RNA sequence: GGGAACGACUCGAGUAGAGUCGAAAAGCGGUCUUCGCAUGGACCGCACAAUGAAGAUACGGUGCUUUUGUAUCGUACUUAUUGUUUCUGGUGCGCUGUUAACCGAGGUAAAUAAUAACCGGAGUCUUCACAAUUGGUGAUUCGUCACCAAUUGUGAAAAAGAAACAACAACAACAAC
Reactivity to DMS in 0.01 (KOAc 150mM, MgCl2 10mM, bicine 150mM(pH8.5), 24C), signal-to-noise 2, nucleotides 027 to 126: g030c000g000g020u000c000u000u000c180g000c120a080u040g030g000a000c000c000g020c000a030c040a030a010u030g020a060a050g010a160u000a000c000g000g000u000g000c020u000u010u020u010g030u000a010u000c000g020u030a020c020u000u000a030u000u010g020u000u000u040c030u000g000g010u030g010c050g010c300u010g010u010u010a070a060c020c000g000a300g010g020u020a050a020a090u020a100a090u020a140a070c010c040g000g020a090g000u000c100u000
Reactivity to 2A3 in 0.01 (KOAc 150mM, MgCl2 10mM, bicine 150mM(pH8.5), 24C), signal-to-noise 5, nucleotides 027 to 126: g000c000g000g010u010c020u090u080c070g010c040a030u090g010g000a000c000c000g010c000a000c000a000a010u160g070a030a020g080a050u010a000c010g010g000u010g000c030u110u210u160u300g040u020a020u010c000g000u000a010c000u000u040a020u000u020g010u000u020u000c010u020g060g030u030g000c000g000c050u100g030u150u080a060a040c010c010g020a070g010g040u070a060a130a130u160a080a060u110a080a060c000c000g030g000a010g010u000c050u030
Record summary:
The record gives the reactivity of an RNA of 177 nucleotides to DMS and 2A3. Values cover nucleotides 27 to 126. As a SHAPE reagent, 2A3 marks flexible, mostly unpaired nucleotides at the ribose 2'-OH. The reactions ran in a buffer of 150 mM KOAc, 10 mM MgCl2 and 150 mM bicine (pH 8.5), at 24 C.